[RMDB]
RNA sequence: GGGAACGACUCGAGUAGAGUCGAAAAGAUAUGGACAUGAGGGAGUUGACCACCUACUAUGAAGACGUCGAUCGGAAACGAUCGACGUUGGAGUAGGAGGUCAACGAAGAACUCAUGUCCUAAGUCACAAACGUAGUAGCUUCGGCUACUACGUUUGAAAAGAAACAACAACAACAAC
Reactivity to DMS in 0.01 (KOAc 150mM, MgCl2 10mM, bicine 150mM(pH8.5), 24C), signal-to-noise 2, nucleotides 027 to 126: g010a030u000a300u000g010g000a050c010a020u000g000a040g000g000g050a120g010u000u000g000a000c010c000a110c000c010u000a000c020u000a270u000g010a250a250g000a000c000g000u000c000g010a020u010c000g000g000a180a120a180c000g000a000u000c000g000a000c000g000u000u010g010g020a020g010u000a000g000g010a030g000g000u000c000a000a000c010g030a120a150g000a160a090c000u000c010a000u000g000u000c000c020u000a030a050g000u000c030a270